The data come from the RNA Mapping Database (RMDB), library POS240. An RNA of 307 nucleotides, treated with 2A3 and DMS and read out base by base.

[RMDB]
RNA sequence: GGGAACGACUCGAGUAGAGUCGAAAACGGUUACUACGGUAACCGACUACCUCGUGAGAGGUAGAGCCAAUGACUUCGGUCAUUGGCAGGCCGUCUUCGGACGGCCACAGAUGCGUGAGCAUCUGAGUAUAACUACGGUUAUACAUGAUCAUCUGAAGAUCAGCUAUUGGAAGAGAAAGAUCAGCCAAGUCCUUUGGACCUGAUCAACUUGAUACGAGAACUACUGAUUUCAACUUCUUUGGCUGAGCUCUCUCCGAAACAAUGAUAAUGCACAGUUCGCUGUGCAUAAAAGAAACAACAACAACAAC
Reactivity to 2A3 in 0.01 (KOAc 150mM, MgCl2 10mM, bicine 150mM(pH8.5), 24C), signal-to-noise 9, nucleotides 027 to 266: c010g000g000u000u000a000c010u010a020c190g120g000u000a000a000c000c000g010a000c000u000a000c000c000u000c010g040u100g080a120g000a000g020g000u000a000g000a020g000c000c000a000a000u000g000a000c010u030u070c300g120g000u000c010a000u000u000g000g000c000a000g000g010c000c000g000u000c000u020u040c130g100g000a000c000g000g000c000c000a000c000a000g000a000u000g000c020g050u100g070a040g010c000a000u000c000u010g050a050g020u000a000u000a020a000c020u040a030c230g090g000u000u000a000u000a020c050a060u110g050a040u050c040a020u030c090u210g120a110a040g020a060u020c020a010g050c040u110a080u200u180g050g040a100a060g020a060g040a060a160a030g040a070u000c000a000g000c010c000a020a010g020u070c010c030u120u140u300g030g010a030c010c030u060g030a050u030c010a030a140c050u080u140g020a020u060a140c080g040a020g050a100a020c050u170a040c060u210g090a230u100u150u190c060a090a070c040u040u030c000u010u030u020g000g000c000u000g000a010g020c010u010c000u000c000u000c030c010g060a080a060a010c040a040a080u130g160a070u260a180
Reactivity to DMS in 0.01 (KOAc 150mM, MgCl2 10mM, bicine 150mM(pH8.5), 24C), signal-to-noise 7, nucleotides 027 to 266: c030g010g000u000u000a010c000u000a110c130g040g010u000a000a010c000c000g010a260c010u000a000c000c000u000c010g000u020g000a210g000a010g000g020u000a000g000a210g000c000c000a000a010u000g000a010c000u000u020c190g030g010u000c000a010u000u000g000g010c010a030g000g030c000c010g020u000c000u000u020c190g010g010a010c010g010g010c000c010a020c010a010g010a010u000g010c000g000u010g010a210g020c000a000u000c000u000g000a190g010u000a010u000a010a010c010u000a110c190g030g000u000u000a000u000a010c010a160u010g010a040u000c030a080u020c150u010g010a130a090g010a030u000c000a080g010c150u010a060u010u010g000g010a180a110g000a040g000a040a050a040g000a040u000c000a020g000c030c020a030a030g000u000c010c010u010u010u020g020g010a040c040c020u000g010a060u000c030a080a120c190u020u000g010a040u010a110c090g000a030g000a030a030c110u010a100c160u010g000a160u000u010u010c050a080a160c190u000u000c010u000u000u000g000g000c000u000g000a020g000c030u000c030u000c010u000c010c030g000a130a080a090c110a040a030u000g000a110u010a080
For DMS, 33,538 sequencing reads were counted.